Source information:
Structure probing data (2A3 and DMS) for a 177-nucleotide construct. For DMS the reverse transcriptase was MarathonRT.
RNA sequence: GGGAACGACUCGAGUAGAGUCGAAAACAUAUUCCAUUCUUAUUUAAAUACAUACAACUUGCCAUUCUAACUAUUAGACCACUAUUUUUUAAAUUAAACAAUACAGGGUCUAUACACCCUCCAUCUCCAUAGUAAUGCUGUUCGCAGCAUUACUAUGAAAAGAAACAACAACAACAAC
Reactivity to 2A3 in 0.01 (KOAc 150mM, MgCl2 10mM, bicine 150mM(pH8.5), 24C), signal-to-noise 9, nucleotides 027 to 126: c030a060u210a090u090u060c020c010a050u110u100c030u060u160a280u170u150u120a090a160a060u170a060c040a040u160a040c020a080a070c070u060u060g030c030c010a070u080u070c060u100a040a160c010u050a120u160u030a020g010a010c000c010a010c050u010a050u010u030u010u020u010u060a100a300a160u140u210a040a060a040c030a030a000u030a020c070a030g000g000g020u000c000u000a010u010a010c050a020c000c000c000u040c030c010a090u040c040u010c040
Reactivity to DMS in 0.01 (KOAc 150mM, MgCl2 10mM, bicine 150mM(pH8.5), 24C), signal-to-noise 2, nucleotides 027 to 126: c090a090u020a130u000u000c020c000a090u010u040c040u000u030a040u060u000u020a010a090a100u040a210c040a080u000a090c130a050a110c060u020u000g010c030c010a050u000u000c040u010a060a060c150u010a100u000u010a040g010a000c000c010a040c020u000a000u000u000u010u050u040u040a050a050a170u030u050a030a010a080c010a030a020u010a020c090a050g010g010g000u000c000u000a020u000a060c090a180c030c020c020u000c020c010a090u000c060u000c080

It was measured as part of the RMDB library OK1LIB. The DMS profile rests on 2,168 reads.